[RMDB]
RNA sequence: GGGAACGACUCGAGUAGAGUCGAAAAGAUAUGGAAAUCGAAGAACUGGAUGGCGUUUGACGUCGGAAACGACCGAGCCACCAGGGAGAUUUCCUAAGUCAAACCCAGUAGCUUCGGCUACUGGGAACUAUAGAGUAGAGUUCGCUCUACUCUAUAGAAAAGAAACAACAACAACAAC
Reactivity to DMS in 0.01 (KOAc 150mM, MgCl2 10mM, bicine 150mM(pH8.5), 24C), signal-to-noise 4, nucleotides 027 to 126: g000a030u010a300u000g000g000a000a020a000u000c010g000a130a160g000a110a180c010u000g000g010a160u000g000g010c010g000u010u000u010g020a140c300g000u000c000g020g010a050a100a140c010g000a020c000c020g000a100g010c000c000a020c010c000a010g020g000g000a090g000a010u000u000u000c000c000u000a000a080g010u010c020a070a090a190c000c000c000a010g000u000a000g000c020u000u010c240g010g000c010u000a010c000u000g000g000g010a000a010
Reactivity to 2A3 in 0.01 (KOAc 150mM, MgCl2 10mM, bicine 150mM(pH8.5), 24C), signal-to-noise 4, nucleotides 027 to 126: g020a010u080a040u160g020g010a040a000a000u030c050g150a300a070g000a110a060c020u000g050g100a300u020g090g060c070g090u140u300u300g110a090c010g010u000c000g000g040a080a110a030c030g000a000c010c000g000a020g000c010c000a000c000c000a000g010g010g020a050g010a000u000u000u020c010c010u010a110a010g030u030c020a010a000a280c000c010c000a010g000u000a000g010c020u070u050c300g150g010c020u000a000c000u010g000g000g000a000a000
Overview: Source: RMDB library TTRDEL, as collected in RNAgym. The record gives the reactivity of an RNA of 177 nucleotides to DMS and 2A3. The reactions ran in a buffer of 150 mM KOAc, 10 mM MgCl2 and 150 mM bicine (pH 8.5), at 24 C. For DMS, 3,410 sequencing reads were counted.